[RMDB]
Source: RMDB library OK1LIB, as collected in RNAgym. An RNA of 177 nucleotides, treated with 2A3 and DMS and read out base by base. For 2A3, 1,514 sequencing reads were counted. DMS adducts were read by reverse transcription with MarathonRT. 2A3 adducts were read by reverse transcription with SuperScript II with manganese.
RNA sequence: GGGAACGACUCGAGUAGAGUCGAAAAGAAAGAAGAAAAACCGUGUGAACUAUGAUGGCUUUACAAAUCUCGACGAAAAGAAACACUUGAUACUACCGAAAGCAAGAGCUGCUGCAUACGGAAGAAAAUCCGAUAAAUCCUUCGGGAUUUAUCGGAUAAAAGAAACAACAACAACAAC
Reactivity to 2A3 in 0.01 (KOAc 150mM, MgCl2 10mM, bicine 150mM(pH8.5), 24C), signal-to-noise 3, nucleotides 027 to 126: g060a010a070a000g140a070a010g080a030a080a010a000a000c010c000g020u000g000u010g070a040a050c070u050a110u250g020a040u020g070g000c030u110u040u110a060c030a010a130a100u090c030u020c050g150a130c050g040a130a010a000a070g070a010a070a000c030a000c020u010u050g030a010u060a130c050u020a070c050c030g110a100a000a000g040c030a000a060g000a000g110c030u060g000c010u010g000c000a000u010a050c030g020g020a000a030g060a000a100a000
Reactivity to DMS in 0.01 (KOAc 150mM, MgCl2 10mM, bicine 150mM(pH8.5), 24C), signal-to-noise 2, nucleotides 027 to 126: g000a080a070a140g000a070a040g020a040a030a070a120a140c070c000g010u010g000u000g000a080a060c170u000a000u000g040a050u030g000g000c030u000u020u010a050c060a090a070a110u000c010u000c020g010a110c140g030a080a020a040a090g040a130a110a040c150a090c060u020u000g000a100u000a040c060u000a040c080c070g000a040a020a090g000c100a020a070g000a090g030c060u030g000c050u010g000c010a020u030a100c050g000g060a050a080g000a100a100a070